This 177-nucleotide RNA was probed chemically with DMS. For DMS, 6,583 sequencing reads were counted. Source: RMDB library TTRINS, as collected in RNAgym. Conditions: 150 mM KOAc, 10 mM MgCl2 and 150 mM bicine (pH 8.5), 24 C. For DMS the reverse transcriptase was MarathonRT. Reactivities are given for positions 27 through 126.
[RMDB]
RNA sequence: GGGAACGACUCGAGUAGAGUCGAAAAGAUAUGGAUGGUCUGGACCUUAUGUAACUGCGAUAAGUCGUGUUCGGAAACGAACAAACGACUUUUGACGCAGUGCAUAAGGUCCAGACCAUCCUAAGUCGUCUACUUAAAGGUUCGCCUUUAAGUAGACAAAAGAAACAACAACAACAAC
Reactivity to DMS in 0.01 (KOAc 150mM, MgCl2 10mM, bicine 150mM(pH8.5), 24C), signal-to-noise 4, nucleotides 027 to 126: g000a110u010a300u000g000g000a010u000g000g000u000c000u000g000g010a040c000c000u000u000a000u000g010u000a080a080c000u000g010c000g030a180u000a020a010g000u000c000g020u010g000u000u000c010g000g000a130a140a300c010g000a020a000c010a050a090a110c010g000a010c000u000u000u000u010g010a280c040g010c010a010g010u000g000c000a000u000a000a010g010g010u000c010c000a000g000a000c000c010a000u000c000c000u000a010a080g000u010c130